[RMDB]
RNA sequence: GGGAACGACUCGAGUAGAGUCGAAAAUUGUUAGCUAGCAAUCCCAUCGCUAAGGAGAAGCAUGGGCUCACGGGCUAUACCUGUGAUGUAAAACCCACAUACUAUACUACAUUGCACUGUGUACUAGGUGGACAUAUAACUUCGGUUAUAUGUCCACAAAAGAAACAACAACAACAAC
Reactivity to DMS in 0.01 (KOAc 150mM, MgCl2 10mM, bicine 150mM(pH8.5), 24C), signal-to-noise 3, nucleotides 027 to 126: u000u000g020u000u000a060g000c070u000a150g000c050a020a040u000c020c020c010a050u000c290g030c010u000a110a110g000g000a110g020a180a040g010c000a050u000g010g000g000c140u000c000a020c030g010g010g030c080u010a150u020a300c020c020u000g010u010g010a050u000g010u000a040a040a080a140c040c000c000a080c170a140u010a140c120u010a080u000a050c150u000a040c010a030u000u000g010c100a070c170u000g020u000g010u000a050c120u000a080g000
Reactivity to 2A3 in 0.01 (KOAc 150mM, MgCl2 10mM, bicine 150mM(pH8.5), 24C), signal-to-noise 3, nucleotides 027 to 126: u020u020g050u080u030a080g030c130u040a030g010c020a000a030u030c020c000c010a010u050c080g000c020u050a050a130g130g030a150g110a120a000g020c010a010u040g000g000g000c010u000c010a000c030g000g000g010c080u120a050u130a220c000c000u010g000u000g040a030u000g010u060a010a070a050a100c010c070c030a020c000a030u150a050c030u060a040u020a110c030u010a030c040a030u040u120g080c070a040c100u050g000u010g020u080a040c020u020a080g150

An RNA of 177 nucleotides, treated with DMS and 2A3 and read out base by base. Source: RMDB library RFMREP, as collected in RNAgym. For 2A3 the reverse transcriptase was SuperScript II with manganese. The reactions ran in a buffer of 150 mM KOAc, 10 mM MgCl2 and 150 mM bicine (pH 8.5), at 24 C. For DMS the reverse transcriptase was MarathonRT.